The data come from the RNA Mapping Database (RMDB), library OK2TST. Chemical mapping of a 177-nucleotide RNA with 2A3 and DMS. For DMS, 1,474 sequencing reads were counted. For 2A3, 1,435 sequencing reads were counted.
RNA sequence: GGGAACGACUCGAGUAGAGUCGAAAAACAUCCACCUGAGAUCUGCAAGGUACAAAGCAAGAUAGGCUACCGACAGUUUGCAUCUUGAGCCCGAACUUAGAGAGUGCUCCUUGUAGUGUGGUGUAUAAAUCGUGCGAGAAUUCGUUCUCGCACGAUUAAAAGAAACAACAACAACAAC
Reactivity to 2A3 in 0.01 (KOAc 150mM, MgCl2 10mM, bicine 150mM(pH8.5), 24C), signal-to-noise 2, nucleotides 027 to 126: a000c000a050u050c010c000a020c010c020u130g190a120g010a200u030c000u010g000c020a010a010g000g030u030a050c060a010a160a010g000c010a000a010g010a060u040a040g100g050c000u060a040c000c070g210a050c050a050g050u080u110u130g070c010a000u000c000u050u050g050a040g040c020c000c030g030a090a040c060u150u120a080g030a000g000a010g160u050g020c010u050c030c000u000u060g010u030a030g020u020g060u050g010g050u020g030u030a030u090a090
Reactivity to DMS in 0.01 (KOAc 150mM, MgCl2 10mM, bicine 150mM(pH8.5), 24C), signal-to-noise 2, nucleotides 027 to 126: a110c120a070u010c030c010a050c020c040u010g000a220g000a100u010c030u000g030c020a020a040g000g000u030a100c130a060a110a160g000c000a050a020g000a080u000a110g000g010c050u000a110c090c060g010a150c090a060g000u000u010u020g010c090a060u020c000u010u010g010a060g000c030c010c030g020a110a130c120u000u020a060g000a110g000a160g030u000g000c090u030c040c020u000u000g000u000a010g030u010g010u000g010g010u010g030u000a100u020a050